[RMDB]
RNA sequence: GGGAACGACUCGAGUAGAGUCGAAAAGCGAUGCGCCUUGACGAUCGAGCUGACGAUGGCCAGGCCCAAGCCGUGGCCGGACCCAUUGGACCGAGACUUGCUGGCCCGCACGAACCGGUCGAAGAGGGUUCCUGAAACCGUUCGCGGUUUCAGGAACAAAAGAAACAACAACAACAAC
Reactivity to 2A3 in 0.01 (KOAc 150mM, MgCl2 10mM, bicine 150mM(pH8.5), 24C), signal-to-noise 1, nucleotides 027 to 126: g070c050g110a150u120g110c070g020c050c060u060u120g020a070c000g060a110u050c030g000a020g100c080u060g020a070c010g080a140u110g030g040c020c020a030g050g010c010c060c020a030a090g060c060c070g080u190g030g010c000c000g010g010a030c010c050c010a110u060u180g140g010a010c000c010g010a010g080a170c020u040u070g000c020u050g080g080c000c000c000g020c010a030c020g010a010a040c060c010g000g000u020c010g020a070a020g050a080g000g030
Reactivity to DMS in 0.01 (KOAc 150mM, MgCl2 10mM, bicine 150mM(pH8.5), 24C), signal-to-noise 2, nucleotides 027 to 126: g020c040g000a040u020g000c110g020c000c020u000u010g030a300c020g010a040u000c000g020a200g000c030u000g000a160c090g000a110u020g000g010c020c030a140g000g020c070c250c080a080a090g010c070c030g020u000g010g010c010c000g000g000a110c060c030c060a150u010u000g000g000a050c030c020g000a110g000a180c050u000u000g000c050u010g030g000c020c040c070g010c060a110c070g000a130a150c190c050g000g010u000c010g000a030a100g000a100g000g030
Record summary: The record gives the reactivity of an RNA of 177 nucleotides to 2A3 and DMS. For DMS, 1,105 sequencing reads were counted. Values cover nucleotides 27 to 126. For DMS the reverse transcriptase was MarathonRT. The RNA was probed in 150 mM KOAc, 10 mM MgCl2 and 150 mM bicine (pH 8.5) at 24 C.